[RMDB]
RNA sequence: GGGAACGACUCGAGUAGAGUCGAAAAAGGUGAUCUUUGAAAACACCAAUGUAUUAGGGCUAUCAAACCUACCCUUUAUCGUAAGAUACGAUCAAUCUCGGUCUCUUAACUAUGUCUAUGAAGUGGUCAGCGUCCAGAGAUGCAGCUGGUCCAGCGAAGAAUCAACUUAUUUCGAUAAGUUGAUUCUAAAAGAAACAACAACAACAAC
Reactivity to DMS in 0.01 (KOAc 150mM, MgCl2 10mM, bicine 150mM(pH8.5), 24C), signal-to-noise 4, nucleotides 027 to 156: a050g030g020u010g020a090u010c040u010u000u000g010a150a100a080a140c030a080c000c020a090a100u010g010u000a120u000u000a040g020g020g010c030u000a220u010c060a070a070a170c090c000u000a050c020c000c010u000u010u010a080u000c060g010u000a090a130g000a160u000a050c040g020a050u000c050a050a130u010c080u000c010g020g000u000c020u010c040u000u000a060a080c060u000a060u000g000u000c030u010a060u000g010a070a120g000u010g020g010u000c030a080g030c050g000u000c030c020a100g010a110g020a110u000g010c050a110g020c040u000g000g010u000c030c030a110g020c060g010a120
Reactivity to 2A3 in 0.01 (KOAc 150mM, MgCl2 10mM, bicine 150mM(pH8.5), 24C), signal-to-noise 8, nucleotides 027 to 156: a000g060g020u040g020a140u060c080u130u230u210g070a080a060a020a030c040a020c000c000a030a100u130g030u070a140u090u090a060g040g000g000c050u080a080u250c110a120a080a070c010c010u040a070c020c020c000u030u070u060a060u030c020g020u030a070a090g020a130u090a100c020g020a020u040c050a100a090u050c040u030c090g050g020u010c020u000c000u110u090a050a040c040u070a090u170g060u060c020u060a090u150g120a150a040g040u060g060g000u030c020a010g000c010g050u010c040c010a040g020a000g010a090u090g050c040a020g000c000u030g000g050u040c000c030a020g050c020g060a130

An RNA of 207 nucleotides, treated with DMS and 2A3 and read out base by base. The reactions ran in a buffer of 150 mM KOAc, 10 mM MgCl2 and 150 mM bicine (pH 8.5), at 24 C. For 2A3, 6,209 sequencing reads were counted. It was measured as part of the RMDB library OK3TST. 2A3 adducts were read by reverse transcription with SuperScript II with manganese.